[RMDB]
RNA sequence: GGGAACGACUCGAGUAGAGUCGAAAAUUUAAGAGCGUAGAUGUCUCUGUCACGAUACGAGUAAGUGACUCUCGUGUACUACUGACGAAUGAGACUGAGACAUUUAUGCUCAGUGUCAGUCAAGGAACGACAGUAUUCGGUUCGCCGAAUACUGUCGAAAAGAAACAACAACAACAAC
Reactivity to DMS in 0.01 (KOAc 150mM, MgCl2 10mM, bicine 150mM(pH8.5), 24C), signal-to-noise 3, nucleotides 027 to 126: u000u010u010a100a140g000a010g010c000g030u010a020g010a030u000g010u000c000u000c000u010g010u000c000a080c070g000a090u000a060c010g020a040g000u000a030a060g030u000g000a050c090u010c150u010c160g000u000g000u000a050c060u000a060c050u000g010a100c050g000a070a110u000g020a090g010a020c030u000g000a020g000a010c010a030u000u010u000a010u000g010c000u000c000a020g020u000g000u000c070a050g000u010c080a110a100g000g000a070a130
Reactivity to 2A3 in 0.01 (KOAc 150mM, MgCl2 10mM, bicine 150mM(pH8.5), 24C), signal-to-noise 4, nucleotides 027 to 126: u180u180u070a170a050g000a020g010c020g000u000a000g010a030u000g000u000c010u000c030u030g000u000c000a010c060g060a010u050a070c020g020a000g020u050a110a180g030u050g250a070c030u010c020u030c060g090u070g020u060a070c050u020a000c020u070g120a080c040g080a100a100u130g030a050g010a080c000u010g000a000g000a000c000a000u000u020u010a000u010g000c010u000c000a000g000u020g060u010c030a040g030u050c050a060a120g120g020a110a100
Chemical mapping of a 177-nucleotide RNA with DMS and 2A3. Conditions: 150 mM KOAc, 10 mM MgCl2 and 150 mM bicine (pH 8.5), 24 C. The DMS profile rests on 2,898 reads.